[RMDB]
This 177-nucleotide RNA was probed chemically with 2A3 and DMS. For DMS, 2,458 sequencing reads were counted. The reactions ran in a buffer of 150 mM KOAc, 10 mM MgCl2 and 150 mM bicine (pH 8.5), at 24 C.
RNA sequence: GGGAACGACUCGAGUAGAGUCGAAAAGGCGUCUUCGCUGCCUCGGCCGCCAUGCACUGACCGGUAGCCGCCGUAAUCGCGGCAUUGUUCCCAUAAAAGGAUGUGGGUGUGGGUGUCGAAGUAGCAGAUAUAGCAUGGACUUCGGUCCAUGCUAUAUAAAAGAAACAACAACAACAAC
Reactivity to 2A3 in 0.01 (KOAc 150mM, MgCl2 10mM, bicine 150mM(pH8.5), 24C), signal-to-noise 1, nucleotides 027 to 126: g150g090c070g080u060c040u150u130c080g050c020u020g030c000c000u000c000g010g000c030c030g010c000c020a060u050g070c000a020c090u120g120a130c010c040g040g000u060a040g000c000c000g020c000c020g010u060a060a100u200c040g020c000g030g000c040a010u030u210g020u020u010c020c010c000a010u130a010a160a010a020g090g050a110u080g000u090g220g050g020u070g040u020g070g050g000u030g000u000c020g000a020a000g030u030a000g040c010a020g000
Reactivity to DMS in 0.01 (KOAc 150mM, MgCl2 10mM, bicine 150mM(pH8.5), 24C), signal-to-noise 2, nucleotides 027 to 126: g000g020c090g010u000c060u000u010c110g020c030u000g000c000c030u000c020g010g020c020c030g040c000c040a050u000g010c020a050c020u010g000a110c030c030g000g010u010a170g010c010c010g000c000c100g010u020a070a060u010c300g000c000g000g000c010a140u010u010g000u000u000c000c000c000a110u010a050a050a080a160g000g010a120u010g020u000g000g000g050u000g020u000g000g000g010u000g020u000c020g010a020a040g000u010a030g010c010a110g010